The record gives the reactivity of an RNA of 177 nucleotides to 2A3 and DMS.

RNA sequence: GGGAACGACUCGAGUAGAGUCGAAAACUGCUUACCAUUGCCAAUAUCCAGUGUGUCGCCCGUUUUGACGGUGAUGAAAUUCCAUUCAGGAUGAUGAUGAUGGCCGUUAAUUGAGUCGAUAGCAUUGCUCUGAAACUCUGUUCGCAGAGUUUCAGAGAAAAGAAACAACAACAACAAC
Reactivity to 2A3 in 0.01 (KOAc 150mM, MgCl2 10mM, bicine 150mM(pH8.5), 24C), signal-to-noise 2, nucleotides 027 to 126: c010u050g010c020u040u080a070c040c010a040u060u100g070c020c000a090a100u060a090u120c040c050a040g000u020g000u010g040u060c010g010c010c000c040g080u010u060u030u110g090a030c010g030g040u060g070a080u010g000a090a090a030u050u010c060c010a040u060u180c040a060g000g060a060u090g000a010u050g010a030u040g020a020u030g040g000c010c010g010u010u060a080a020u090u030g050a060g040u040c020g070a090u040a010g000c020a050u030u110g040
Reactivity to DMS in 0.01 (KOAc 150mM, MgCl2 10mM, bicine 150mM(pH8.5), 24C), signal-to-noise 2, nucleotides 027 to 126: c070u000g010c070u010u000a110c050c030a070u000u010g000c030c070a070a070u000a090u010c090c010a090g000u000g010u010g010u000c030g010c050c000c000g020u000u000u000u020g000a030c020g020g030u000g020a110u000g020a090a080a090u000u000c100c020a140u000u030c150a180g020g030a050u000g000a200u020g000a100u000g010a090u000g010g000c050c020g000u000u010a040a030u000u000g000a050g010u000c030g000a070u000a070g020c040a090u010u010g020
DMS adducts were read by reverse transcription with MarathonRT. Conditions: 150 mM KOAc, 10 mM MgCl2 and 150 mM bicine (pH 8.5), 24 C. For 2A3, 1,459 sequencing reads were counted. Source: RMDB library OK2TST, as collected in RNAgym.